[RMDB]
RNA sequence: GGGAACGACUCGAGUAGAGUCGAAAAGUUUGAAGAUUUCGGUCCUAUGCAAUAUGAACCCAUGAACCAUGUCAGGUCCUGACGGAAGCAGCAUUAAGUGGAUCAUCAUAUGUGCCGUAGGGUAGCCGAGAUUUAGCUAACGACUUUGGUUACGUUCGGUUUUAACAUUGUUCGCAAUGUUAAAACCAAAAGAAACAACAACAACAAC
Reactivity to DMS in 0.01 (KOAc 150mM, MgCl2 10mM, bicine 150mM(pH8.5), 24C), signal-to-noise 1, nucleotides 027 to 156: g000u000u000u000g010a130a160g010a080u000u000u000c020g000g010u020c000c020u000a060u000g000c040a010a070u000a070u000g010a070a180c040c000c000a040u000g000a100a190c210c260a090u000g060u000c090a280g040g000u000c060c030u050g000a160c250g000g010a140a080g010c030a130g000c060a040u000u010a110a230g010u000g000g000a040u000c080a170u000c040a000u000a040u010g010u010g030c050c100g020u000a060g020g030g040u000a220g000c000c030g010a060g000a070u000u000u000a080g000c170u000a120a110c040g000a040c020u010u000u000g010g000u000u000a190c030g000u010u000c030
Reactivity to 2A3 in 0.01 (KOAc 150mM, MgCl2 10mM, bicine 150mM(pH8.5), 24C), signal-to-noise 3, nucleotides 027 to 156: g040u060u090u100g090a070a020g020a060u020u000u000c150g130g050u300c000c000u030a020u040g000c000a010a010u000a000u030g000a010a020c010c000c000a010u040g010a020a020c100c040a040u010g060u120c010a010g030g000u010c010c020u080g140a060c140g010g000a010a000g000c010a000g000c000a000u020u010a080a000g000u000g010g020a020u040c010a010u010c000a000u050a020u070g250u110g140c070c060g010u010a000g000g000g000u010a010g000c000c000g000a000g000a000u020u030u060a030g040c010u050a040a010c010g050a030c020u100u070u090g090g000u060u100a050c050g030u030u080c070